[RMDB]
RNA sequence: GGGAACGACUCGAGUAGAGUCGAAAACAUGUGCCUGUCUGAGGGGGGAGGGACCUCGAUAGUCGGUGAGAGACCCGAGAGAGCAGGAAAGCACAUGAUGGCAACGCUCACAGACUUAAAAACCGGCCCCUCACUAGCGAUUCGUCGCUAGUGAGGGAAAAGAAACAACAACAACAAC
Reactivity to 2A3 in 0.01 (KOAc 150mM, MgCl2 10mM, bicine 150mM(pH8.5), 24C), signal-to-noise 1, nucleotides 027 to 126: c020a040u030g010u030g010c000c000u060g020u060c020u080g030a050g000g020g040g020g020g000a030g120g000g040a100c000c000u030c000g010a030u010a050g040u030c000g000g000u040g020a070g000a000g030a080c000c050c020g050a050g000a000g020a000g000c060a040g060g000a120a000a020g050c000a000c000a030u100g020a000u000g070g000c050a080a000c050g000c010u030c000a040c040a040g100a140c020u100u180a020a030a000a100a060c000c000g020g000c010
Reactivity to DMS in 0.01 (KOAc 150mM, MgCl2 10mM, bicine 150mM(pH8.5), 24C), signal-to-noise 1, nucleotides 027 to 126: c060a010u010g000u000g040c000c040u080g000u010c010u050g000a280g000g040g000g000g000g030a210g050g000g040a140c010c020u000c000g060a100u010a040g010u000c060g000g000u000g000a060g000a000g000a150c060c000c000g060a070g030a150g000a040g030c000a040g000g000a290a010a130g030c050a030c060a070u030g000a160u000g000g020c100a060a030c230g000c010u000c130a090c000a010g000a100c080u000u000a120a100a020a170a030c200c020g000g010c070